[RMDB]
RNA sequence: GGGAACGACUCGAGUAGAGUCGAAAAGUUUACGCUCCAAGAUCGGUGGAUAGCAGCCCUAUCAAUAUCUAGGAGAACUGUGCUAUGUUUAGAAGAUUAGCUAGUCUCUAAACAGAACAAUUUACCUCAUACGUUAGGACGUUCGCGUCCUAACGAACGAAAUACCACUCUUCGGAGUGGUAUUUCGAAAAGAAACAACAACAACAAC
Reactivity to DMS in 0.01 (KOAc 150mM, MgCl2 10mM, bicine 150mM(pH8.5), 24C), signal-to-noise 1, nucleotides 027 to 156: g000u000u000u000a060c090g000c020u000c020c010a060a140g010a060u000c160g020g030u000g040g000a120u000a100g000c080a260g040c140c080c000u000a110u000c040a100a090u000a040u000c090u000a040g030g040a300g000a080a080c030u010g000u000g010c040u000a190u000g010u000u000u000a010g000a090a070g040a010u000u000a160g040c160u000a110g030u010c030u010c010u010a000a030a020c000a050g020a030a050c070a070a090u050u000u010a110c010c000u010c030a140u000a090c000g040u000u010a010g020g010a010c030g060u000u000c290g040c020g000u000c010c010u010a000a000c000g020a030a080
Reactivity to 2A3 in 0.01 (KOAc 150mM, MgCl2 10mM, bicine 150mM(pH8.5), 24C), signal-to-noise 4, nucleotides 027 to 156: g000u020u040u110a080c070g000c000u000c010c010a060a020g020a050u060c080g100g230u110g120g010a060u040a060g010c090a020g000c040c000c010u040a020u020c030a040a060u030a010u150c010u020a040g000g010a030g020a050a070c100u110g020u020g060c040u050a010u070g000u010u010u000a090g000a300a010g000a070u100u030a050g080c070u090a050g010u000c000u000c000u010a000a000a000c000a000g020a020a010c020a010a030u070u110u220a120c020c010u080c070a080u100a230c000g000u000u010a000g000g000a010c000g010u050u050c200g000c030g060u030c000c000u000a000a000c000g000a020a000

This 207-nucleotide RNA was probed chemically with DMS and 2A3. The 2A3 profile rests on 2,155 reads. The DMS profile rests on 1,666 reads.